[RMDB]
RNA sequence: GGGAACGACUCGAGUAGAGUCGAAAAGCCACGCUAUUCGUAGCGUGGCGGUUAAGAUCUAGACAAAAACUGACAAAAAGUCUAGAUCAAAUAAUGUCAGAACGGUCCGGGAUUUCGAUCCCGGAAAACAGUACAAUAUCUUCGGAUAUUGUACUGUAAAAGAAACAACAACAACAAC
Reactivity to DMS in 0.01 (KOAc 150mM, MgCl2 10mM, bicine 150mM(pH8.5), 24C), signal-to-noise 6, nucleotides 027 to 126: g000c000c000a000c000g010c000u000a030u000u010c160g030u000a000g010c000g050u000g000g020c000g000g000u000u000a090a120g010a010u000c000u000a010g010a010c000a070a100a080a120a100c050u000g010a030c030a060a150a110a120a120g000u000c000u000a000g010a000u000c010a030a070a090u000a080a060u010g010u000c020a050g000a160a120c200g000g000u000c000c010g000g000g010a020u000u000u010c190g010a030u000c000c000c000g010g000a000a010a040
Reactivity to 2A3 in 0.01 (KOAc 150mM, MgCl2 10mM, bicine 150mM(pH8.5), 24C), signal-to-noise 3, nucleotides 027 to 126: g020c000c010a000c000g000c010u020a040u070u080c190g100u040a000g000c000g000u000g000g010c000g010g000u050u020a050a000g010a000u000c000u010a010g010a010c030a000a300a050a110a070c020u050g040a010c010a020a140a010a050a030g010u000c000u000a000g010a010u000c000a000a000a000u080a020a040u060g050u020c020a010g030a190a050c040g100g010u020c010c000g030g000g000a010u050u070u080c130g030a010u020c000c000c000g010g000a000a000a000
This 177-nucleotide RNA was probed chemically with DMS and 2A3. Conditions: 150 mM KOAc, 10 mM MgCl2 and 150 mM bicine (pH 8.5), 24 C. The 2A3 profile rests on 5,005 reads.